Source information
Chemical mapping of a 177-nucleotide RNA with DMS. Values cover nucleotides 27 to 126. Conditions: 150 mM KOAc, 10 mM MgCl2 and 150 mM bicine (pH 8.5), 24 C. Values are in units of 0.01, from 0 to 300, in steps of 10. The DMS profile rests on 1,054 reads. For DMS the reverse transcriptase was MarathonRT.

[RMDB]
RNA sequence: GGGAACGACUCGAGUAGAGUCGAAAAAAAAAGGUAUAUCAAGCGAAGAUCGAAAGAUCAUGCUCGAUAGAUAUACAUCCCUCAGGAAACUGAAAAUCGAGCAAUCGCUAAAAGCGAAAGCAAAAAAGUAUGUAUACCUCUUCGGAGGUAUACAUACAAAAGAAACAACAACAACAAC
Reactivity to DMS in 0.01 (KOAc 150mM, MgCl2 10mM, bicine 150mM(pH8.5), 24C), signal-to-noise 1, nucleotides 027 to 126: a030a020a020a030a050g010g000u000a000u000a030u000c000a110a080g000c000g010a080a050g000a020u000c010g000a130a060a110g000a000u000c000a080u000g020c110u000c050g040a040u000a080g000a020u000a000u000a020c000a080u000c000c000c000u000c030a020g010g010a140a090a110c020u000g000a030a010a020a050u030c070g000a140g010c000a050a140u010c000g010c020u000a050a030a100a120g020c010g000a030a020a300g030c040a000a040a050a040a100a100